Structure probing data (2A3 and DMS) for a 177-nucleotide construct. Source: RMDB libraries RFM100 and RFMREP, as collected in RNAgym. The RNA was probed in 150 mM KOAc, 10 mM MgCl2 and 150 mM bicine (pH 8.5) at 24 C.

RNA sequence: GGGAACGACUCGAGUAGAGUCGAAAAAUGUUUGAUUACUAAAAGUUGGGGCAUUCGAUGGUUUACAGAAGUCAUAAAUUCAAAUAUCCCGUUUAAUCGCUCAUCUAUUAAAAUCAAUAGUAGAAUGCAUCUAGAUACACUUCGGUGUAUCUAGAUGAAAAGAAACAACAACAACAAC
Reactivity to 2A3 in 0.01 (KOAc 150mM, MgCl2 10mM, bicine 150mM(pH8.5), 24C), signal-to-noise 4, nucleotides 027 to 126: a000u130g040u020u030u090g050a040u000u110a060c090u140a070a030a020a110g030u060u100g050g000g010g020c050a060u020u030c020g020a020u090g030g030u030u120u020a030c040a030g060a020a000g040u010c040a070u120a120a130a070u110u040c020a000a100a040u110a030u030c000c000c000g010u030u000u020a060a030u070c050g010c050u020c000a070u010c020u060a070u030u120a090a080a040a070u070c050a020a050u020a060g120u010a020g020a100a030u120g050
Reactivity to DMS in 0.01 (KOAc 150mM, MgCl2 10mM, bicine 150mM(pH8.5), 24C), signal-to-noise 4, nucleotides 027 to 126: a120u020g020u020u000u010g010a070u010u010a100c080u020a060a060a090a090g010u000u010g010g000g000g010c050a040u000u020c050g010a060u020g010g010u010u010u020a030c120a200g000a040a030g010u020c120a110u000a060a060a080u010u000c040a020a040a180u000a050u010c030c010c000g010u000u010u010a060a050u010c140g010c040u000c020a050u000c000u000a020u010u010a010a050a070a060u020c110a010a040u000a040g010u000a050g020a080a090u010g010